[RMDB]
RNA sequence: GGGAACGACUCGAGUAGAGUCGAAAAGAUAUGGAGAUGUGACAUGCUAUGAGUUCGGAAACGAACUCCAUAGCAACAGCACAUUCUCCUAAGUCAAAACAGAACCCGACUUCGGUCGGGUUCUGAACUACUCUCACCAGUUCGCUGGUGAGAGUAGAAAAGAAACAACAACAACAAC
Reactivity to DMS in 0.01 (KOAc 150mM, MgCl2 10mM, bicine 150mM(pH8.5), 24C), signal-to-noise 1, nucleotides 027 to 126: g000a020u010a300u010g000g010a000g000a030u000g010u000g060a070c090a150u010g040c010u000a010u010g010a060g010u020u000c010g020g000a060a090a270c000g010a010a000c010u000c100c070a000u000a000g000c010a060a030c210a130g010c000a000c000a020u020u020c010u000c000c000u020a020a040g010u000c020a080a060a110a190c010a020g010a000a020c000c000c030g000a040c030u000u010c210g050g020u000c000g060g000g010u000u000c000u000g000a030a140

Structure probing data (DMS) for a 177-nucleotide construct.
Source: RMDB library TTRDEL, as collected in RNAgym.
Values cover nucleotides 27 to 126.
The DMS profile rests on 730 reads.
The RNA was probed in 150 mM KOAc, 10 mM MgCl2 and 150 mM bicine (pH 8.5) at 24 C.